[RMDB]
RNA sequence: GGGAACGACUCGAGUAGAGUCGAAAACCGUAUUCGUACGGACGGGUCCGUAGGUUGCGAUAAGAUCUUUAGGGACUAAGACAGUGGCUUCGAAAGAGGCCAUCGAGUCCGGGAUCUUUUGACGCAACCUAAACGGCGCAUGCUGAUUCGUCAGCAAGACUACAGUAACUUUCGAGUUACUGUAGUCAAAAGAAACAACAACAACAAC
Reactivity to 2A3 in 0.01 (KOAc 150mM, MgCl2 10mM, bicine 150mM(pH8.5), 24C), signal-to-noise 5, nucleotides 027 to 156: c000c000g010u010a060u050u170c300g020u030a030c000g010g100a030c060g050g030g070u060c010c010g010u010a020g000g000u000u010g000c020g020a070u020a060a000g000a000u000c000u060u170u250a270g120g000g000a010c010u040a130a090g060a040c080a090g020u020g010g000c010u020u000c000g060a110a110a070g010a010g000g000c000c000a000u020c010g010a010g010u000c000c000g000g000g000a000u000c000u020u030u010u080g110a050c010g010c010a000a000c000c010u000a000a020a000c010g010g000c050g000c060a090u140g000c000u010g020a070u060u080c140g130u050c070a000g010c040a030a060
Reactivity to DMS in 0.01 (KOAc 150mM, MgCl2 10mM, bicine 150mM(pH8.5), 24C), signal-to-noise 3, nucleotides 027 to 156: c000c010g050u000a080u000u010c180g030u000a040c010g010g020a120c040g000g020g000u000c010c020g010u000a030g010g010u000u000g000c000g040a230u000a050a020g000a010u000c010u000u000u000a160g090g010g030a020c000u000a140a160g010a180c300a050g010u000g010g010c000u000u010c010g000a160a120a300g000a040g010g000c000c000a000u000c030g000a070g010u000c000c020g000g010g000a050u000c000u000u000u000u000g020a220c020g000c010a010a020c000c000u000a000a030a080c020g010g020c070g000c090a180u000g020c030u000g010a090u010u010c200g020u000c010a020g000c040a090a230